[RMDB]
Structure probing data (2A3 and DMS) for a 177-nucleotide construct. The RNA was probed in 150 mM KOAc, 10 mM MgCl2 and 150 mM bicine (pH 8.5) at 24 C. It was measured as part of the RMDB library OK1LIB. For DMS the reverse transcriptase was MarathonRT. High 2A3 reactivity points to a flexible backbone, as in loops and unpaired stretches.
RNA sequence: GGGAACGACUCGAGUAGAGUCGAAAAGCUGAGCGAUCAGUACGCCCGCGGUAGGGCAUGACGCCAUGGGGGCGUGUCGGUGUACCGACACGCUCGCUCACGGGUUCGGUUGCACCAAGAAAAGAUGGCAUGUCAGCCUAUUCGUAGGCUGACAUGCAAAAGAAACAACAACAACAAC
Reactivity to 2A3 in 0.01 (KOAc 150mM, MgCl2 10mM, bicine 150mM(pH8.5), 24C), signal-to-noise 2, nucleotides 027 to 126: g000c020u010g020a020g010c010g110a150u020c010a000g050u080a020c090g030c000c010c000g000c040g080g020u290a200g000g000g050c030a030u030g000a000c050g040c100c010a050u090g020g000g060g000g000c000g000u000g000u000c000g000g050u260g170u220a300c000c000g000a000c000a000c000g000c000u000c000g020c010u060c000a040c020g020g000g000u130u090c110g050g050u090u080g010c030a070c050c020a050a020g210a050a120a030a000g260a060u190g140
Reactivity to DMS in 0.01 (KOAc 150mM, MgCl2 10mM, bicine 150mM(pH8.5), 24C), signal-to-noise 1, nucleotides 027 to 126: g020c000u000g000a030g020c220g000a110u030c000a000g010u010a110c150g000c000c000c000g010c030g000g000u000a150g030g000g020c030a020u030g020a130c030g010c010c010a060u070g050g000g000g000g080c000g040u000g010u000c060g020g030u000g000u050a010c010c000g000a000c000a000c020g000c030u000c030g000c040u000c070a050c230g000g000g020u000u000c050g000g300u000u040g030c050a160c030c060a050a250g000a170a080a070a020g110a070u000g000